[RMDB]
RNA sequence: GGGAACGACUCGAGUAGAGUCGAAAAAGUGUAUGAAGUACGUAGAGUGUCGGCAAGCUCUAUAUAUGGACACUUACGAAGGGUUUUGGUUGUUUUGUAUCCCAAGCCGACUUUGAGUAUUUGAGGAAAAAGACUUACGCCUUCGGGCGUAAGUCAAGGAGAGAUUGAAGUUCGCUUCAAUCUCUCCAAAAGAAACAACAACAACAAC
Reactivity to 2A3 in 0.01 (KOAc 150mM, MgCl2 10mM, bicine 150mM(pH8.5), 24C), signal-to-noise 1, nucleotides 027 to 156: a010g120u120g000u080a220u140g060a030a000g020u030a010c000g000u000a000g030a030g010u020g030u060c090g000g050c060a090a110g020c030u000c000u020a050u020a000u010a010u050g080g030a000c020a020c030u020u140a040c030g100a180a080g060g000g030u000u010u100u050g000g010u020u000g040u000u070u000u090g060u060a140u110c030c010c010a010a000g000c000c000g010a030c030u180u110u070g020a040g020u140a130u070u130u130g050a050g000g060a000a090a000a000a000g010a000c010u010u010a000c000g000c010c000u050u010c190g050g000g020c000g000u000a000a000g000u000c010a010a010